[RMDB]
RNA sequence: GGGAACGACUCGAGUAGAGUCGAAAAUGCUAUGACAGGUUUAAAGUUAAUGAGACAAAUUCUCAAUAUUUGUUUAGUACUAUUAAUGCUCUACCAGAAACUUCUGCCGAUAUUCUGGUGGUUGAUGACGGCCGUAAGUUCGCUUACGGCAAAAGAAACAACAACAACAAC
Reactivity to DMS in 0.01 (KOAc 150mM, MgCl2 10mM, bicine 150mM(pH8.5), 24C), signal-to-noise 7, nucleotides 027 to 129: u040g000c010u000a000u030g000a010c030a020g000g030u040u040u020a050a120a110g000u060u020a080a070u050g000a000g000a060c090a060a010a090u020u000c130u040c110a100a060u050a000u010u000u000g000u020u020u000a110g000u040a040c090u000a110u030u010a090a050u060g010c000u020c000u030a030c020c020a000g030a020a020a110c250u000u000c060u030g040c120c100g040a060u020a050u020u000c030u000g030g040u000g060g000u010u000g000a040u030g000a130c220g000
Reactivity to 2A3 in 0.01 (KOAc 150mM, MgCl2 10mM, bicine 150mM(pH8.5), 24C), signal-to-noise 6, nucleotides 027 to 129: u060g000c030u040a020u110g050a080c010a040g010g010u060u040u160a050a010a090g050u070u200a110a060u150g050a010g010a060c060a020a050a040u240u020c040u020c060a080a030u100a010u100u020u000g060u000u030u010a010g000u000a070c080u020a050u260u080a060a050u160g000c000u020c020u030a000c000c000a000g040a010a050a060c040u030u050c020u150g100c000c080g020a080u060a090u190u010c030u060g000g010u000g010g030u080u040g020a090u090g030a010c040g070
Chemical mapping of a 170-nucleotide RNA with DMS and 2A3. 2A3 adducts were read by reverse transcription with SuperScript II with manganese. Source: RMDB library 15KLIB, as collected in RNAgym. Conditions: 150 mM KOAc, 10 mM MgCl2 and 150 mM bicine (pH 8.5), 24 C.